[RMDB]
RNA sequence: GGGAACGACUCGAGUAGAGUCGAAAAGAUAUGGAGAGUCAAGGGAGCUGCUCGGAAACGAGACAGCAUCGAUCUUGGACUCUCCUAAGUCAAAACCCGAUAUAUCCGUUCGCGGAUAUAUCGGGAAUCUCGUCUGUAAGUUCGCUUACAGACGAGAAAAAGAAACAACAACAACAAC
Reactivity to 2A3 in 0.01 (KOAc 150mM, MgCl2 10mM, bicine 150mM(pH8.5), 24C), signal-to-noise 1, nucleotides 027 to 126: g000a030u040a000u140g000g000a000g000a000g030u010c040a000a000g010g110g020a010g000c010u020g000c010u000c000g010g020a070a060a040c000g000a020g250a300c000a000g000c020a030u220c040g030a050u010c010u020u020g100g020a010c020u010c000u000c000c000u000a000a010g000u030c020a000a000a080a160c000c020c000g010a000u010a000u000a000u020c000c000g050u090u050c300g020c010g160g010a000u000a000u000a000u000c000g000g000g040a000a010
Reactivity to DMS in 0.01 (KOAc 150mM, MgCl2 10mM, bicine 150mM(pH8.5), 24C), signal-to-noise 1, nucleotides 027 to 126: g040a050u000a300u010g000g010a030g000a010g050u000c000a000a010g020g010g000a050g020c000u000g000c000u000c000g010g000a060a040a190c010g000a010g000a130c000a030g020c000a170u000c150g030a070u000c000u010u000g020g020a010c000u000c010u000c010c000u000a010a070g000u010c000a100a060a100a130c000c000c000g000a000u000a000u000a000u000c010c000g010u000u010c260g010c010g010g000a010u000a000u000a000u000c000g010g020g010a000a010